[RMDB]
RNA sequence: GGGAACGACUCGAGUAGAGUCGAAAAAGACUGUCUUCUGUUGCUAUCACCGUCUUCGUAGGAAUUGUGUGUGUUAAGGCUUUCCAGUAUUUUCUGAGCAUUGGAAUGUAGUCAGUCCUACCUCUACCCAUCCUCUGCUUUUAGGGAGAACAGUGUAUGGAUCAUUUAUGUUCGCAUAAAUGAUCCAAAAAGAAACAACAACAACAAC
Reactivity to DMS in 0.01 (KOAc 150mM, MgCl2 10mM, bicine 150mM(pH8.5), 24C), signal-to-noise 2, nucleotides 027 to 156: a040g010a100c030u000g010u020c020u010u000c040u000g000u000u000g020c020u000a090u010c020a050c030c040g040u000c030u000u000c070g040u020a110g030g000a070a090u010u000g030u010g020u030g020u000g030u000u010a060a110g020g000c040u000u000u000c010c010a110g010u000a110u010u000u000u000c090u000g010a130g030c060a070u010u020g020g010a050a090u000g020u010a060g020u010c030a080g000u010c050c040u000a130c050c040u000c030u000a100c020c000c020a200u000c050c010u000c060u010g010c050u000u000u000u000a080g000g020g010a090g000a030a050c070a100g000u020g020u000a260
Reactivity to 2A3 in 0.01 (KOAc 150mM, MgCl2 10mM, bicine 150mM(pH8.5), 24C), signal-to-noise 3, nucleotides 027 to 156: a000g040a030c040u030g020u090c050u100u050c030u080g090u070u070g000c020u060a090u180c020a010c060c030g050u030c030u140u070c070g110u160a110g000g110a100a090u120u040g010u000g010u000g000u000g050u110u060a100a040g060g000c010u090u000u040c030c000a010g010u030a110u080u150u030u080c060u150g030a020g000c010a030u000u050g010g030a130a100u050g030u030a000g030u050c050a000g010u030c000c010u000a010c010c020u060c030u080a150c010c000c010a020u030c020c010u060c010u010g020c000u070u000u040u180a070g060g010g010a060g020a030a000c000a030g030u080g000u170a060
An RNA of 207 nucleotides, treated with DMS and 2A3 and read out base by base. The DMS profile rests on 7,406 reads. Values cover nucleotides 27 to 156.